[RMDB]
RNA sequence: GGGAACGACUCGAGUAGAGUCGAAAAAAAAGAUAUGGACUGAGCUACCCACCUAAUUCAAACAAUGAUGUUAUAUCGGAAACGAUAUAAUUGAGUUUGACUUAGAGGCUCAGUCCUAAGUCAAAAACAAAUACUGAUGCUUCGGCAUCAGUAUUUGAAAAGAAACAACAACAACAAC
Reactivity to DMS in 0.01 (KOAc 150mM, MgCl2 10mM, bicine 150mM(pH8.5), 24C), signal-to-noise 1, nucleotides 027 to 126: a030a070a070a120g000a050u000a120u000g000g010a010c000u010g000a000g000c000u000a100c030c110c110a300c100c000u020a000a000u020u000c060a010a010a010c000a200a080u000g030a060u000g010u000u000a000u000a000u010c040g000g000a060a050a070c000g030a010u000a000u000a000a000u010u000g000a100g000u000u000u010g000a000c210u000u000a000g010a090g040g000c000u020c000a010g000u000c000c000u000a000a040g000u000c070a060a010a030a170a190
This 177-nucleotide RNA was probed chemically with DMS. DMS adducts were read by reverse transcription with MarathonRT. Reactivities are given for positions 27 through 126. The DMS profile rests on 929 reads.